[RMDB]
RNA sequence: GGGAACGACUCGAGUAGAGUCGAAAAGAUAUGGAACACAUACUGCGCGUUCGAGGUCGGAAACGACUCCCCACCGAACGAACUACGCAGUGUGUUCCUAAGUCAAACCAGGGGUUCGCCCCUGGAACGCUAUUGGUAACUUCGGUUACCAAUAGCGAAAAGAAACAACAACAACAAC
Reactivity to 2A3 in 0.01 (KOAc 150mM, MgCl2 10mM, bicine 150mM(pH8.5), 24C), signal-to-noise 1, nucleotides 027 to 126: g050a030u120a050u190g000g000a000a000c010a000c010a030u220a210c010u000g030c050g000c000g020u010u010c000g000a000g040g030u010c050g020g090a120a060a080c060g120a070c060u100c000c000c020c000a010c000c010g000a010a020c050g010a090a040c120u190a050c170g010c000a000g000u000g000u020g010u000u000c000c000u000a060a010g040u000c020a120a010a010c000c010a010g020g010g000g000u060u120c190g150c000c000c020c020u000g000g000a000a010
Reactivity to DMS in 0.01 (KOAc 150mM, MgCl2 10mM, bicine 150mM(pH8.5), 24C), signal-to-noise 2, nucleotides 027 to 126: g000a050u010a300u000g020g000a000a000c040a010c020a060u040a240c020u000g020c010g000c210g010u010u000c020g030a080g080g010u000c040g000g000a070a070a190c010g020a010c060u000c010c040c000c020a300c030c010g000a090a020c040g000a010a060c070u000a250c060g010c020a010g030u000g030u010g020u000u000c000c000u000a050a100g020u000c040a130a110a090c010c010a020g000g000g010g000u000u020c200g010c010c000c000c000u030g010g000a030a080